[RMDB]
RNA sequence: GGGAACGACUCGAGUAGAGUCGAAAACUACCGCACGUGACGACUUUGGGACAGUUACUCUGGUGGCUUCCGCUACAAACCAUACGCUAGGAGGCAGGUCGUUCGACCGCUGUCUUGCACGUUAUGAGAUAUCCUAGCACUUCGGUGCUAGGAUAUCAAAAGAAACAACAACAACAAC
Reactivity to 2A3 in 0.01 (KOAc 150mM, MgCl2 10mM, bicine 150mM(pH8.5), 24C), signal-to-noise 5, nucleotides 027 to 126: c040u070a080c020c010g050c020a010c020g050u050g050a060c110g040a050c060u120u080u210g060g020g020a020c020a020g000u040u050a040c020u020c050u230g100g040u030g020g010c020u040u010c030c010g000c030u080a060c120a100a170a030c060c020a070u040a110c070g030c050u080a080g040g000a000g020g010c010a030g000g030u020c020g090u180u290c130g020a020c000c000g000c030u010g020u010c000u030u080g020c030a000c040g020u030u030a090u120g060a050
Reactivity to DMS in 0.01 (KOAc 150mM, MgCl2 10mM, bicine 150mM(pH8.5), 24C), signal-to-noise 2, nucleotides 027 to 126: c040u000a120c090c060g000c120a100c060g000u000g000a060c030g000a050c020u010u000u040g000g000g020a060c150a080g010u000u000a050c050u000c110u030g000g020u010g000g000c040u000u000c000c040g010c010u000a070c180a030a070a160c190c080a070u020a030c070g010c020u000a100g110g000a050g010g030c110a110g020g000u000c010g000u060u000c190g000a040c020c000g000c070u000g030u000c050u000u000g010c140a090c000g000u000u000a050u010g060a180
Chemical mapping of a 177-nucleotide RNA with 2A3 and DMS.
The reactions ran in a buffer of 150 mM KOAc, 10 mM MgCl2 and 150 mM bicine (pH 8.5), at 24 C.
For DMS the reverse transcriptase was MarathonRT.